The record gives the reactivity of an RNA of 177 nucleotides to DMS and 2A3. It was measured as part of the RMDB library OK2TRN. Values cover nucleotides 27 to 126. The RNA was probed in 150 mM KOAc, 10 mM MgCl2 and 150 mM bicine (pH 8.5) at 24 C.
RNA sequence: GGGAACGACUCGAGUAGAGUCGAAAAAUUAGCGGGUACCGCCAACAAAACAUUGCUGGCCUGGGCGGUUAAACAUGACAUUAAUGCGGUUGGCUUAUGCUUGGGUGAUGGUAAUACCGUGUCGGUCAUCAUCCAUACACUUCGGUGUAUGGAUGAUAAAAGAAACAACAACAACAAC
Reactivity to DMS in 0.01 (KOAc 150mM, MgCl2 10mM, bicine 150mM(pH8.5), 24C), signal-to-noise 4, nucleotides 027 to 126: a100u000u010a110g020c040g000g020g030u010a050c070c040g040c020c010a040a080c110a060a070a070a090c130a090u010u000g010c040u000g000g010c040c030u000g010g000g020c030g010g000u010u010a030a060a080c110a050u000g010a050c110a090u010u000a070a080u010g010c040g030g030u010u000g020g000c040u010u010a070u000g010c020u000u000g010g000g020u000g000a070u000g010g010u000a060a120u000a100c030c050g030u010g010u000c070g000g010u010c120
Reactivity to 2A3 in 0.01 (KOAc 150mM, MgCl2 10mM, bicine 150mM(pH8.5), 24C), signal-to-noise 2, nucleotides 027 to 126: a030u150u070a020g030c040g010g040g010u030a020c010c010g030c020c020a030a020c020a040a100a020a010c050a070u010u210g020c030u030g010g030c010c050u060g000g010g040c040g000g000u010u040a040a040a020c030a040u110g090a010c010a030u120u150a140a060u180g060c030g030g000u040u020g020g000c000u100u060a100u170g020c000u020u050g080g050g000u030g040a080u080g010g010u050a090a040u070a110c020c030g000u020g060u040c030g030g050u020c030